[RMDB]
RNA sequence: GGGAACGACUCGAGUAGAGUCGAAAAUGUACUGCAUCAUCUAACAAUUUUCUCCGUACUAUGUUGCCCCGUAACCCCGUAACUUUAUCACGCUGUACAUUUUACAGCGAAUGUAAACUACAGAUGAACUCGCACUGAUCUUCGGAUCAGUGCGAGUAAAAGAAACAACAACAACAAC
Reactivity to DMS in 0.01 (KOAc 150mM, MgCl2 10mM, bicine 150mM(pH8.5), 24C), signal-to-noise 1, nucleotides 027 to 126: u000g000u000a030c060u050g010c140a050u000c060a060u010c080u010a060a110c090a070a060u000u000u000u000c030u000c030c090g010u000a030c020u010a080u000g020u010u000g010c000c010c020c090g000u000a100a100c010c000c010c010g020u020a030a090c060u020u000u000a010u030c170a220c070g010c000u010g030u000a010c300a130u010u000u020u000a060c030a000g000c070g010a040a040u000g000u000a010a010a040c180u030a010c100a080g000a040u010g000a120